[RMDB]
RNA sequence: GGGAACGACUCGAGUAGAGUCGAAAAAGUUCGCAGCCUUGAACCCAAAGUUUGCACACUUGAAGUCGGUGACAUUACCAUCCACACAUCAACAAGCGCCAAACAGAUCAUCGUUCCACGCGUUUCAUCAACAUCUAGUGAAAUUUUUCCAAAAUACCAGUUAGCUGUACUUCGGUACAGCUAACUGAAAAGAAACAACAACAACAAC
Reactivity to 2A3 in 0.01 (KOAc 150mM, MgCl2 10mM, bicine 150mM(pH8.5), 24C), signal-to-noise 2, nucleotides 027 to 156: a000g020u060u120c020g000c060a050g010c010c050u060u070g040a050a100c050c000c000a060a020a040g030u060u110u060g060c030a030c000a000c030u080u120g060a060a000g060u100c000g040g070u020g040a030c010a110u020u100a060c000c020a030u000c040c000a070c030a020c000a170u050c010a010a120c020a110a040g020c010g000c090c030a060a070a060c010a010g030a060u060c010a020u020c040g030u070u000c010c010a040c080g030c010g000u030u060u060c070a050u060c050a020a080c000a100u070c010u100a020g030u010g100a020a040a090u090u060u040u060u080c080c090a000a190a020a010u290a090c160
The data come from the RNA Mapping Database (RMDB), library OK3TST. The record gives the reactivity of an RNA of 207 nucleotides to 2A3. For 2A3 the reverse transcriptase was SuperScript II with manganese. For 2A3, 750 sequencing reads were counted.